Overview
An RNA of 207 nucleotides, treated with DMS and 2A3 and read out base by base.
[RMDB]
RNA sequence: GGGAACGACUCGAGUAGAGUCGAAAAAUAUUGCAGCAUUUACACAUACAGUAACUUUACGCUAUGUUUAUAAUGUAUCUAUUGGUGAAAAUAUUACAUUAUCUAAACCCGAUAACCUAUCCUUCCAACUACAUCACUGGUUCUGUGAAAGAACAUCCGUAGAACGUCUAUUCGUAGACGUUCUACGAAAAGAAACAACAACAACAAC
Reactivity to DMS in 0.01 (KOAc 150mM, MgCl2 10mM, bicine 150mM(pH8.5), 24C), signal-to-noise 2, nucleotides 027 to 156: a080u000a030u000u000g000c040a080g010c000a060u000u000u000a120c060a060c050a120u010a250c040a120g030u010a070a060c050u000u010u000a070c040g030c040u000a080u000g000u000u000u000a070u010a050a020u010g000u010a040u000c070u000a070u000u000g010g020u000g010a070a060a040a070u000a030u000u000a030c000a030u000u010a040u000c030u010a030a060a120c020c050c000g000a110u000a120a000c030c040u000a090u010c030c020u010u000c000c030a030a050c060u000a100c040a030u010c060a100c050u010g020g020u000u000c050u010g000u000g010a050a060a060g020a040a060c040a120u000c000
Reactivity to 2A3 in 0.01 (KOAc 150mM, MgCl2 10mM, bicine 150mM(pH8.5), 24C), signal-to-noise 5, nucleotides 027 to 156: a000u060a030u040u110g030c010a020g000c000a020u010u060u090a050c060a010c010a010u090a040c040a050g060u070a090a120c070u130u140u150a030c040g000c040u040a020u090g050u000u060u020a040u000a060a000u020g030u020a070u050c060u030a040u060u070g040g000u080g080a150a130a030a050u060a020u040u070a020c020a010u020u040a020u040c050u070a070a070a090c010c030c020g040a050u060a080a070c000c020u040a070u070c030c000u080u050c030c000a060a040c040u090a050c010a100u140c040a040c110u080g070g010u030u000c000u020g110u030g140a130a060a030g010a020a010c000a030u020c040

The RNA was probed in 150 mM KOAc, 10 mM MgCl2 and 150 mM bicine (pH 8.5) at 24 C.